RNA sequence: GGGAACGACUCGAGUAGAGUCGAAAAACUUCUUAAUUAGAGGUAAGAGUAAUGUGGACGGACAUACUUUCAGUCUGCGAGAUUACUAUAUCUACAACCACAAUGACAUUUGCGGUCGAAAGUAUGAAUAAAUUAAUGCCUUCGGGCAUUAAUUUAUAAAAGAAACAACAACAACAAC
Reactivity to 2A3 in 0.01 (KOAc 150mM, MgCl2 10mM, bicine 150mM(pH8.5), 24C), signal-to-noise 3, nucleotides 027 to 126: a000c010u050u020c010u070u150a300a300u090u190a040g020a020g030g050u050a120a030g040a040g100u150a030a140u150g020u090g040g060a040c060g060g000a030c010a000u000a030c030u000u000u000c030a070g000u000c000u000g040c020g000a030g000a010u040u070a150c140u170a100u080a030u220c010u050a080c090a120a120c050c000a030c020a140a120u090g060a060c050a220u130u090u090g000c000g000g030u000c000g020a000a000a000g000u000a010u040g030a040
Reactivity to DMS in 0.01 (KOAc 150mM, MgCl2 10mM, bicine 150mM(pH8.5), 24C), signal-to-noise 3, nucleotides 027 to 126: a060c020u020u010c010u010u020a100a080u040u030a040g020a060g000g000u010a040a110g000a130g000u010a040a050u020g000u010g000g000a140c150g000g000a200c030a010u000a020c010u000u000u000c010a140g030u010c060u010g040c110g000a020g000a050u000u000a050c150u020a050u040a070u020c040u000a070c080a100a070c110c040a080c110a030a050u010g010a130c220a110u020u000u000g020c020g020g000u010c030g000a000a020a020g000u010a000u000g000a140